Chemical mapping of a 177-nucleotide RNA with DMS and 2A3.
DMS adducts were read by reverse transcription with MarathonRT.
Conditions: 150 mM KOAc, 10 mM MgCl2 and 150 mM bicine (pH 8.5), 24 C.
Reactivities are given for positions 27 through 126.
2A3 adducts were read by reverse transcription with SuperScript II with manganese.
The data come from the RNA Mapping Database (RMDB), libraries RFM100 and RFMREP.
[RMDB]
RNA sequence: GGGAACGACUCGAGUAGAGUCGAAAAGAGGUGAGAAUCCUUACCGCCGGAGGGGCUAGGGUUCCUUGGCAAUGUUCGUCAGCCAAGGGUUAGUCGAUCCUAAGGUCAGUCAUAAGUUGAGCUGGUCGUAAUCUAUAGUCUUCGGACUAUAGAUUACAAAAGAAACAACAACAACAAC
Reactivity to DMS in 0.01 (KOAc 150mM, MgCl2 10mM, bicine 150mM(pH8.5), 24C), signal-to-noise 9, nucleotides 027 to 126: g000a040g000g010u010g000a120g000a300a110u020c010c000u000u000a150c040c020g010c120c130g010g010a090g000g010g000g000c020u010a030g000g010g020u020u030c000c000u000u000g000g010c010a070a080u030g010u020u020c140g000u020c090a200g000c000c010a010a010g000g000g010u010u000a030g010u000c030g010a120u010c000c000u010a110a140g000g000u000c050a030g000u000c040a080u020a070a140g010u000u000g000a100g010c010u000g000g010u020c100
Reactivity to 2A3 in 0.01 (KOAc 150mM, MgCl2 10mM, bicine 150mM(pH8.5), 24C), signal-to-noise 9, nucleotides 027 to 126: g050a000g000g010u020g010a040g020a020a050u030c000c000u000u030a060c010c020g050c030c040g020g020a040g020g090g000g010c020u020a020g040g050g090u110u180c010c000u010u010g000g030c090a080a060u060g040u100u170c160g100u140c090a170g300c060c010a010a010g030g000g000u020u030a010g010u010c030g030a060u050c000c000u030a100a030g020g000u010c010a000g010u000c020a060u050a300a040g040u060u070g040a050g030c000u020g010g050u040c050